[RMDB]
The record gives the reactivity of an RNA of 177 nucleotides to 2A3 and DMS.
It was measured as part of the RMDB library TTRDES.
For 2A3, 42,440 sequencing reads were counted.
Reactivities are given for positions 27 through 126.
High 2A3 reactivity points to a flexible backbone, as in loops and unpaired stretches.
RNA sequence: GGGAACGACUCGAGUAGAGUCGAAAAGAUAUGGAUCGGCAAGGGAGUUGCACAUCGGAAACGAUGUGGCAACAUCGAUCUUGUCGAUCCUAAGUCAAAAGUUGAUCACCCUUCGGGGUGAUCAACAGACUGUAGUAUUCUUCGGAAUACUACAGUCAAAAGAAACAACAACAACAAC
Reactivity to 2A3 in 0.01 (KOAc 150mM, MgCl2 10mM, bicine 150mM(pH8.5), 24C), signal-to-noise 4, nucleotides 027 to 126: g000a010u020a010u040g000g000a000u000c000g010g010c000a000a010g030g070g040a230g020u000u010g000c000a000c000a000u010c000g000g000a010a000a000c010g000a000u010g010u030g050g070c010a000a000c000a010u180c050g030a030u010c000u000u000g000u000c010g000a000u000c000c000u000a000a000g000u000c010a020a030a090a170g000u010u000g000a010u000c000a010c000c000c000u020u090c300g070g000g000g000u000g000a000u000c000a000a000c000a000
Reactivity to DMS in 0.01 (KOAc 150mM, MgCl2 10mM, bicine 150mM(pH8.5), 24C), signal-to-noise 6, nucleotides 027 to 126: g000a010u000a040u010g000g010a000u000c000g010g000c020a010a010g010g010g010a040g030u000u000g000c000a030c000a000u000c000g020g000a020a010a040c000g000a010u000g000u000g000g020c010a000a010c000a280u010c270g010a030u010c000u000u000g020u000c010g020a010u000c000c000u000a000a060g000u000c000a110a100a130a130g000u000u000g000a020u000c000a010c000c000c000u000u010c260g040g010g010g010u000g000a000u000c000a010a010c000a060